The data come from the RNA Mapping Database (RMDB), library TTRDES. The record gives the reactivity of an RNA of 177 nucleotides to 2A3 and DMS. For DMS, 1,627 sequencing reads were counted. DMS (dimethyl sulfate) methylates the pairing face of unpaired adenines and cytosines. For 2A3, 2,511 sequencing reads were counted. The reactions ran in a buffer of 150 mM KOAc, 10 mM MgCl2 and 150 mM bicine (pH 8.5), at 24 C.

RNA sequence: GGGAACGACUCGAGUAGAGUCGAAAAGAUAUGGAAUUGAACGGGAGCUGCAUUCGGAAACGAAUGGCAGCGAAGAACGUUAAUUCCUAAGUCAAAACAGGAAUUGCAGUUCGCUGCAAUUCCUGAAUCCUAAUGACAGCUUCGGCUGUCAUUAGGAAAAAGAAACAACAACAACAAC
Reactivity to 2A3 in 0.01 (KOAc 150mM, MgCl2 10mM, bicine 150mM(pH8.5), 24C), signal-to-noise 1, nucleotides 027 to 126: g010a000u060a030u070g000g010a050a000u040u100g110a190a000c040g030g090g060a080g020c010u010g060c000a000u000u000c000g000g000a040a010a010c010g030a000a010u070g300g090c020a000g000c000g000a000a020g010a000a000c000g000u010u030a000a000u010u000c000c000u020a050a010g000u020c050a000a000a170a300c010a010g000g010a020a000u000u020g030c000a000g020u060u120c200g140c190u000g000c000a000a000u000u010c000c000u010g000a000a020
Reactivity to DMS in 0.01 (KOAc 150mM, MgCl2 10mM, bicine 150mM(pH8.5), 24C), signal-to-noise 1, nucleotides 027 to 126: g010a010u000a180u010g010g000a020a000u000u000g000a030a050c000g000g020g040a130g010c010u000g020c000a080u000u000c000g040g010a030a020a060c000g010a010a000u000g010g000c040a000g010c000g000a050a110g020a140a240c000g020u000u000a030a000u000u000c000c000u030a020a070g000u000c030a070a080a130a240c000a010g020g000a010a010u000u000g010c010a010g000u000u010c260g030c010u000g010c000a020a000u000u000c000c000u020g000a040a080